[RMDB]
RNA sequence: GGGAACGACUCGAGUAGAGUCGAAAAGAUGACUUGGCAAAUCUCACUGAAAAGAUGGAAGCUCUUAAGAUAACUGAAAAGGGAACUAGAAUAACUGUUCAUCCUAAGAUAGUCUUUGAGAUAGCAACCUAAUAUCCGGUUUCGACCGGAUAUUAGGAAAAGAAACAACAACAACAAC
Reactivity to 2A3 in 0.01 (KOAc 150mM, MgCl2 10mM, bicine 150mM(pH8.5), 24C), signal-to-noise 7, nucleotides 027 to 126: g120a050u160g010a080c080u120u100g070g000c020a020a070a130u030c020u010c020a050c040u090g040a060a060a050a040g030a020u060g040g030a050a020g020c010u020c000u050u020a050a020g040a090u110a200a090c050u070g140a070a090a050a060g040g050g000a030a020c020u040a070g070a200a150u160a160a030c030u060g020u030u010c010a090u100c030c000u030a070a010g030a090u120a070g060u010c000u020u020u060g040a040g020a020u050a020g030c030a030a050
Reactivity to DMS in 0.01 (KOAc 150mM, MgCl2 10mM, bicine 150mM(pH8.5), 24C), signal-to-noise 4, nucleotides 027 to 126: g010a110u010g010a080c080u020u020g030g000c010a050a040a070u010c050u010c040a030c070u000g020a080a060a040a070g020a040u010g010g020a090a100g010c080u020c020u000u000a040a060g000a050u010a090a150c080u000g000a060a050a070a040g000g000g010a030a040c040u010a050g000a140a120u020a080a150c120u000g010u030u000c020a080u010c000c010u000a060a040g010a080u020a100g010u000c010u000u010u000g000a060g020a040u000a100g000c040a120a170